[RMDB]
RNA sequence: GGGAACGACUCGAGUAGAGUCGAAAACGGCCAGUCUCGCCAUGCCGGCGUAGGUCAUCGGGUUGAAGAUGGUCGGCCACGUGGUCCGGACGCGGUGGUCGGUCAGUGGCUUGCCGGCGAACCGGUCACCAGAAACUAGGUUCGCCUAGUUUCUGGUAAAAGAAACAACAACAACAAC
Reactivity to 2A3 in 0.01 (KOAc 150mM, MgCl2 10mM, bicine 150mM(pH8.5), 24C), signal-to-noise 8, nucleotides 027 to 126: c030g020g000c030c010a020g040u030c040u040c120g020c020c020a080u140g000c010c010g020g000c030g090u130a090g010g060u010c000a010u030c020g210g100g090u140u240g120a090a040g030a060u060g000g000u010c000g000g000c010c000a010c030g140u070g030g040u060c020c030g030g030a060c030g020c070g160g140u120g030g010u010c010g000g000u010c020a010g020u010g020g000c000u020u120g000c010c000g020g000c010g000a020a010c010c010g000g010u030c030
Reactivity to DMS in 0.01 (KOAc 150mM, MgCl2 10mM, bicine 150mM(pH8.5), 24C), signal-to-noise 8, nucleotides 027 to 126: c110g010g010c010c030a060g010u000c050u000c090g010c050c050a120u010g010c020c020g010g010c020g030u010a040g030g000u000c010a020u000c040g010g010g030u010u010g010a120a120g010a090u000g000g010u000c000g000g000c000c010a020c020g010u010g010g010u010c020c030g010g010a140c030g020c090g010g010u010g020g010u000c000g000g010u000c020a060g010u000g000g000c010u000u000g010c000c010g000g000c010g010a040a040c030c020g000g000u010c080
Annotation: The record gives the reactivity of an RNA of 177 nucleotides to 2A3 and DMS. The data come from the RNA Mapping Database (RMDB), library OK2TST. For DMS, 32,448 sequencing reads were counted. The reactions ran in a buffer of 150 mM KOAc, 10 mM MgCl2 and 150 mM bicine (pH 8.5), at 24 C. DMS adducts were read by reverse transcription with MarathonRT.